Structure probing data (2A3 and DMS) for a 177-nucleotide construct. The DMS profile rests on 5,208 reads. It was measured as part of the RMDB library OK1LIB. For DMS the reverse transcriptase was MarathonRT. The reactions ran in a buffer of 150 mM KOAc, 10 mM MgCl2 and 150 mM bicine (pH 8.5), at 24 C. The 2A3 profile rests on 12,033 reads. Reactivities are given for positions 27 through 126.
RNA sequence: GGGAACGACUCGAGUAGAGUCGAAAAGAAAAGGAGUCGUAUGUUGAAAAUGUACAUGACUGAAGACAUACGACUGAAAAGAAAGAAAGAAAGUCAUGUACAGAAAGCAUGGAAACAUGCGAAGAAAGGGUAAUCUAUAGUUCGCUAUAGAUUACCCAAAAGAAACAACAACAACAAC
Reactivity to 2A3 in 0.01 (KOAc 150mM, MgCl2 10mM, bicine 150mM(pH8.5), 24C), signal-to-noise 6, nucleotides 027 to 126: g140a020a130a010a030g210g090a010g010u000c000g000u000a010u020g020u020u040g110a090a070a110a200u120g010u000a000c000a000u000g010a000c030u070g070a120a010g010a020c000a000u000a000c000g000a000c000u000g000a010a010a000a020g140a030a040a010g160a030a120a010g140a070a160a000g000u010c000a000u010g010u000a000c000a000g060a040a040a000g000c000a000u000g020g010a010a020a050c000a000u020g010c030g010a070a030g060a070a070a020
Reactivity to DMS in 0.01 (KOAc 150mM, MgCl2 10mM, bicine 150mM(pH8.5), 24C), signal-to-noise 3, nucleotides 027 to 126: g040a060a050a040a070g000g050a040g000u000c000g000u010a010u000g000u020u000g000a100a070a140a050u020g030u020a000c010a010u000g020a010c000u000g010a140a150g000a010c000a000u000a030c000g010a000c000u010g000a050a010a050a040g000a070a060a090g010a110a140a090g000a070a160a050g030u000c000a000u000g000u000a020c010a040g000a050a040a140g010c000a000u000g000g000a270a110a110c000a000u000g000c020g040a070a140g000a080a080a100